The record gives the reactivity of an RNA of 207 nucleotides to DMS and 2A3. 2A3 adducts were read by reverse transcription with SuperScript II with manganese. The RNA was probed in 150 mM KOAc, 10 mM MgCl2 and 150 mM bicine (pH 8.5) at 24 C. Reactivities are given for positions 27 through 156.
RNA sequence: GGGAACGACUCGAGUAGAGUCGAAAAUCGUCGACGACGCUUUCAAUUUGAGAGGGAAGGCACUACAACCCUACCUUGUGGAAGUCUUAGCUUACGUAGACGCAUUAGCUGGGGUGAAAUUGACGGGGAACUUCGUGAACGGGUUUAUCACCGGUCAUGUCUGUAAACUGUUCGCAGUUUACAGACAAAAAGAAACAACAACAACAAC
Reactivity to DMS in 0.01 (KOAc 150mM, MgCl2 10mM, bicine 150mM(pH8.5), 24C), signal-to-noise 2, nucleotides 027 to 156: u010c040g010u010c020g040a070c060g010a110c120g050c040u020u000u000c060a060a120u010u020u010g000a180g000a090g000g000g000a090a030g020g010c030a120c030u000a170c130a080a030c020c010c030u010a200c030c030u010u000g020u000g020g020a020a070g000u000c050u000u000a040g040c050u010u030a110c070g000u000a060g020a050c050g000c070a080u000u010a060g010c010u010g000g010g060g020u020g000a020a070a060u010u000g010a090c070g010g000g020g010a080a130c080u010u000c040g040u000g020a030a030c020g000g010g010u010u010u000a100u030c110a050c000c030g000g000u000c040a170
Reactivity to 2A3 in 0.01 (KOAc 150mM, MgCl2 10mM, bicine 150mM(pH8.5), 24C), signal-to-noise 3, nucleotides 027 to 156: u110c010g030u000c020g020a060c020g020a010c050g040c030u010u050u040c070a140a240u090u160u300g130a170g000a030g030g030g030a080a050g010g000c090a050c080u170a050c040a060a090c010c000c000u050a090c010c010u030u020g020u040g070g090a070a010g020u030c030u090u140a030g070c010u060u100a050c060g070u040a010g000a090c020g000c100a040u030u070a020g030c070u060g000g010g030g000u060g020a030a030a150u080u050g010a020c020g020g000g000g000a010a060c020u090u060c090g040u020g010a080a040c020g000g020g060u070u140u060a170u100c110a060c080c000g000g020u040c020a020